[RMDB]
RNA sequence: GGGAACGACUCGAGUAGAGUCGAAAACUACGUUACCGCUCAGCAGGUAGAUGAUGCAGCGACGGCGAAACAUGAUGCUGAAGUCAGCCUAAAACAGGCAUUAAAACAGUCAUUUGCCGCAGAGGCAAGGUUCAGCUAAGUUCGCUUAGCUGAACCUAAAAGAAACAACAACAACAAC
Reactivity to 2A3 in 0.01 (KOAc 150mM, MgCl2 10mM, bicine 150mM(pH8.5), 24C), signal-to-noise 1, nucleotides 027 to 126: c000u050a020c040g100u030u000a040c030c010g020c030u030c050a090g020c040a060g000g060u040a010g000a060u030g010a030u050g010c030a010g040c000g070a010c050g050g000c050g040a010a120a030c040a050u180g030a040u130g010c040u000g000a040a000g070u050c000a000g010c010c000u100a180a150a050a030c090a040g010g000c000a000u030u070a060a000a000a000c030a000g060u000c020a050u060u040u060g000c010c000g040c020a030g010a000g090g080c020a030
Reactivity to DMS in 0.01 (KOAc 150mM, MgCl2 10mM, bicine 150mM(pH8.5), 24C), signal-to-noise 1, nucleotides 027 to 126: c000u030a080c150g000u000u000a030c000c040g000c020u000c080a050g020c040a110g050g000u000a070g010a010u010g000a090u000g020c050a050g000c060g010a140c080g000g040c060g000a090a080a010c110a040u000g000a140u040g000c020u010g000a020a130g010u000c200a090g030c000c010u000a080a090a080a040c190a050g000g020c000a120u020u000a110a050a110a030c210a100g000u000c010a100u000u000u000g020c000c000g040c090a090g000a070g030g000c040a050

The record gives the reactivity of an RNA of 177 nucleotides to 2A3 and DMS. For 2A3, 1,290 sequencing reads were counted. The DMS profile rests on 797 reads. The reactions ran in a buffer of 150 mM KOAc, 10 mM MgCl2 and 150 mM bicine (pH 8.5), at 24 C.